Conditions: 150 mM KOAc, 10 mM MgCl2 and 150 mM bicine (pH 8.5), 24 C. An RNA of 177 nucleotides, treated with 2A3 and DMS and read out base by base. For 2A3, 11,808 sequencing reads were counted. For 2A3 the reverse transcriptase was SuperScript II with manganese. The DMS profile rests on 9,165 reads.
[RMDB]
RNA sequence: GGGAACGACUCGAGUAGAGUCGAAAAGAUAUGGAGCAAGACUUCCCAGCACUAUGACUUCGGAAACGAAGUCACGAAUGCUGCAGUUGAUGACCUCCUAAGUCGCGCCCUCUGUUCGCAGAGGGAAUGCUUCUAUACAGUUCGCUGUAUAGAAGCAAAAAGAAACAACAACAACAAC
Reactivity to 2A3 in 0.01 (KOAc 150mM, MgCl2 10mM, bicine 150mM(pH8.5), 24C), signal-to-noise 4, nucleotides 027 to 126: g010a010u070a030u210g010g000a020g010c040a180a160g040a040c010u060u060c040c010c010a010g010c010a010c040u070a050u050g010a000c000u010u000c010g010g040a030a090a030c010g000a000a000g000u010c000a000c010g030a270a250u020g010c010u010g030c210a020g010u030u030g100a300u100g040a080c000c010u000c000c000u040a130a050g060u030c020g000c010g030c120c000c000u010c010u010g080u040u060c300g030c130a000g000a020g000g010g000a000a020
Reactivity to DMS in 0.01 (KOAc 150mM, MgCl2 10mM, bicine 150mM(pH8.5), 24C), signal-to-noise 8, nucleotides 027 to 126: g000a040u000a300u000g010g000a010g010c040a090a110g000a040c000u000u010c140c220c010a010g000c000a020c060u010a150u000g010a010c000u000u000c000g010g000a110a090a250c000g010a010a010g010u000c000a010c040g010a070a060u000g010c000u000g050c150a040g000u000u000g010a090u010g000a150c300c010u000c000c010u000a070a120g010u000c030g010c260g000c000c000c000u000c000u000g010u000u010c220g020c000a010g000a010g000g000g000a010a010